This 177-nucleotide RNA was probed chemically with 2A3 and DMS. The 2A3 profile rests on 6,934 reads. In probing experiments dimethyl sulfate is read out at A N1 and C N3, which are open when not base-paired. It was measured as part of the RMDB library TTRDES. For DMS the reverse transcriptase was MarathonRT. The reactions ran in a buffer of 150 mM KOAc, 10 mM MgCl2 and 150 mM bicine (pH 8.5), at 24 C.
[RMDB]
RNA sequence: GGGAACGACUCGAGUAGAGUCGAAAAGAUAUGGAGGUCCGCAGGACAUGCUGCAGGCUCGGAAACGAGCCUGGCAGCAACAGCCUGGGACCUCCUAAGUCAAACCUCAGACGUUCGCGUCUGAGGACUGGUAUUAGUGGUUCGCCACUAAUACCAGAAAAGAAACAACAACAACAAC
Reactivity to 2A3 in 0.01 (KOAc 150mM, MgCl2 10mM, bicine 150mM(pH8.5), 24C), signal-to-noise 3, nucleotides 027 to 126: g000a010u020a020u080g010g010a000g030g000u010c030c110g050c150a000g040g010a020c190a290u300g000c000u010g000c000a010g000g030c000u010c020g000g000a040a030a010c000g010a010g030c030c010u010g000g060c000a000g010c000a010a020c020a000g020c000c000u000g020g020g010a000c000c000u010c000c000u010a010a000g000u000c010a030a070a100c000c000u000c000a000g000a030c000g040u090u110c300g050c000g130u000c000u000g010a000g000g000a100
Reactivity to DMS in 0.01 (KOAc 150mM, MgCl2 10mM, bicine 150mM(pH8.5), 24C), signal-to-noise 3, nucleotides 027 to 126: g000a040u000a090u010g000g010a010g020g020u000c000c010g030c030a010g000g000a040c100a140u000g000c000u010g010c000a020g000g000c000u010c010g010g000a020a020a040c000g000a030g000c000c000u010g010g020c000a010g010c020a050a040c180a140g000c010c000u010g000g010g000a010c000c010u000c000c000u000a000a030g010u000c010a160a120a190c000c000u000c000a010g000a010c000g030u000u020c260g030c010g020u000c000u000g000a000g010g010a030